About this RNA
An RNA of 207 nucleotides, treated with 2A3 and read out base by base. It was measured as part of the RMDB library ARCHII.
[RMDB]
RNA sequence: GGGAACGACUCGAGUAGAGUCGAAAACUUUUACAGGAUCGCGCUUUUCGUCCCGCCCGCUGGGCUGUAAAGCGUUAAAUCAAUAAGCGGUUCUAAGCAUGUAGAGCUGACGGCGGAGUACUGACGGACGGGGGUUCAAAUCCCCCCGCCUCCACCAGUCUAUUACUGACUUCGGUCAGUAAUAGACAAAAGAAACAACAACAACAAC
Reactivity to 2A3 in 0.01 (KOAc 150mM, MgCl2 10mM, bicine 150mM(pH8.5), 24C), signal-to-noise 1, nucleotides 027 to 156: c030u130u210u140u220a080c060a010g100g000a090u120c030g000c000g040c020u000u010u000u000c010g020u090c030c010c020g080c000c000c040g030c060u020g020g000g030c030u030g060u020a000a000a000g000c000g000u020u070a020a070a000u070c020a030a040u110a060a020g000c000g050g000u080u000c030u020a070a000g020c090a080u120g070u290a060g030a000g090c010u020g050a040c000g130g000c030g020g000a000g020u070a040c070u100g080a010c050g040g010a020c000g000g000g000g000g070u070u210c060a070a090a090u060c000c010c000c030c000c000g010c010c000u000c010c000a030c020c010a030